[RMDB]
RNA sequence: GGGAACGACUCGAGUAGAGUCGAAAAUGGAUAUCCUGGAAAGCCAACAAGAAAUAGAGAGAGUCGUGAAGUCUGAUGGAUUCGAGCUAUUACCAUUAAAAGUUCAGACAGAGUGGAUGGAAAGAAGACAGAGUACGCAAUUCGUUGCGUACUCUGUAAAAGAAACAACAACAACAAC
Reactivity to DMS in 0.01 (KOAc 150mM, MgCl2 10mM, bicine 150mM(pH8.5), 24C), signal-to-noise 1, nucleotides 027 to 126: u010g040g030a160u010a100u020c010c030u080g000g040a110a110a050g000c070c020a020a110c060a090a090g000a070a140a100u000a120g010a150g010a170g020a060g000u010c050g010u010g010a120a060g020u000c000u000g010a070u000g010g010a100u000u000c080g010a080g000c070u000a090u000u000a070c070c020a030u010u000a070a090a030a110g000u000u000c020a040g000a050c080a070g010a120g030u000g020g000a060u010g000g000a050a060a150g020a050a120g010